Chemical mapping of a 207-nucleotide RNA with 2A3. The reactions ran in a buffer of 150 mM KOAc, 10 mM MgCl2 and 150 mM bicine (pH 8.5), at 24 C. For 2A3, 978 sequencing reads were counted. The data come from the RNA Mapping Database (RMDB), library RNAMAK.
RNA sequence: GGGAACGACUCGAGUAGAGUCGAAAAGGGCGUUCGCGCCCGUCUAUGAUAUGGAUUCAGAACUACCGAGGAAGUAGUCGUUGAAACUAUUUCGGAAACGAAAUAGUGGAGACUACGCUCGGCUGAAUCCUAAGUCCUGCAGCGCGUUCGCGCGCAAGCUACGAUCGAACUUCGGUUCGAUCGUAGCAAAAGAAACAACAACAACAAC
Reactivity to 2A3 in 0.01 (KOAc 150mM, MgCl2 10mM, bicine 150mM(pH8.5), 24C), signal-to-noise 1, nucleotides 027 to 156: g030g000g010c030g010u080u040c190g060c000g030c060c020c000g000u010c040u090a240u190g010a030u020a000u060g000g000a000u000u030c020a000g040a060a050c070u190a080c300c000g000a020g050g040a300a130g010u020a000g000u020c040g090u120u070g010a020a020a010c010u000a000u000u030u000c000g000g000a040a000a000c010g010a000a010a000u000a000g010u000g000g000a020g000a000c000u000a000c010g010c020u000c000g000g010c000u000g000a000a000u000c000c000u000a000a000g010u000c010c030u110g090c080a100g000c000g020c010g020u160u250c180g000c000g020c000g000c100a050a000